An RNA of 177 nucleotides, treated with 2A3 and DMS and read out base by base. For DMS, 2,053 sequencing reads were counted. For 2A3, 1,881 sequencing reads were counted. The data come from the RNA Mapping Database (RMDB), library OK2TRN. The RNA was probed in 150 mM KOAc, 10 mM MgCl2 and 150 mM bicine (pH 8.5) at 24 C.
[RMDB]
RNA sequence: GGGAACGACUCGAGUAGAGUCGAAAACAAACCGACACAGGUAGGCGAGAAGAGAAUUCUAAGACGCUCGGGAGAACUCUCGUUAAGGAACUCGGCAAAAUGACCCCGUAACUUCGGGAGAAGGGGUUAUCUUACUUCAGUUCGCUGAAGUAAGAUAAAAAGAAACAACAACAACAAC
Reactivity to 2A3 in 0.01 (KOAc 150mM, MgCl2 10mM, bicine 150mM(pH8.5), 24C), signal-to-noise 1, nucleotides 027 to 126: c020a000a050a050c020c020g100a010c080a020c020a170g100g070u080a050g010g050c020g030a020g020a180a000g020a010g040a090a110u150u010c010u060a110a090g110a090c080g040c150u090c130g030g050g040a070g010a090a140c020u000c000u010c080g040u060u150a060a050g070g020a020a020c010u000c040g050g030c020a000a030a040a180u130g050a030c000c000c000c000g000u010a030a060c020u060u060c130g050g030g000a020g020a020a000g010g010g000g030u040
Reactivity to DMS in 0.01 (KOAc 150mM, MgCl2 10mM, bicine 150mM(pH8.5), 24C), signal-to-noise 3, nucleotides 027 to 126: c100a070a100a180c070c020g020a110c080a090c110a050g000g010u010a100g000g000c050g040a040g020a090a080g010a080g010a070a100u010u000c050u020a080a190g000a110c120g000c100u000c100g000g010g010a070g010a080a150c080u000c020u010c020g010u000u010a060a160g000g000a060a050c060u000c060g020g020c080a060a030a080a050u010g000a070c020c010c000c010g010u000a110a140c090u010u000c100g020g010g000a060g020a090a120g010g000g000g000u010